[RMDB]
RNA sequence: GGGAACGACUCGAGUAGAGUCGAAAAACCGGCGGUAAAUGAACUCAGUUGAAAGCCGCGAGCGCUUUGGGUGCGAACUCAAAGGACAGCAGAUCCGGUGUAAUUCCGGGGCCGACGGUUAGAGUCCAAAAGAGGUUAUCGUUCGCGAUAACCUCAACCCUCUUAUUAACUUCGGUUAAUAAGAGGGAAAAGAAACAACAACAACAAC
Reactivity to DMS in 0.01 (KOAc 150mM, MgCl2 10mM, bicine 150mM(pH8.5), 24C), signal-to-noise 1, nucleotides 027 to 156: a020c010c000g000g010c020g010g030u000a080a080a130u000g000a120a200c020u000c000a140g050u010u000g000a080a150a230g000c010c020g000c010g030a120g050c050g000c000u000u000u010g010g010g000u000g020c210g020a280a060c020u000c010a010a040a030g010g010a100c010a130g000c030a060g020a190u000c020c000g050g060u000g010u020a140a300u000u000c010c000g020g010g010g050c000c030g000a050c000g010g000u010u000a100g000a230g020u000c000c010a050a050a110a140g010a020g070g040u000u000a000u010c000g020u000u000c300g030c030g000a010u010a000a010c010c000u000c000a010a020
Reactivity to 2A3 in 0.01 (KOAc 150mM, MgCl2 10mM, bicine 150mM(pH8.5), 24C), signal-to-noise 2, nucleotides 027 to 156: a000c040c010g030g020c040g000g010u080a120a160a160u220g090a110a070c010u030c080a110g030u140u060g130a200a080a060g030c020c040g030c120g000a020g010c030g000c000u000u000u020g020g000g000u060g030c100g050a090a010c000u020c000a000a010a010g020g060a080c030a030g030c020a050g040a200u050c000c000g000g000u020g010u040a060a090u040u000c020c030g000g000g020g030c010c000g020a010c000g000g010u030u010a040g010a020g170u000c000c020a020a110a040a080g000a000g000g000u000u010a010u000c000g020u030u040c140g030c000g130a000u000a000a010c010c000u000c000a010a000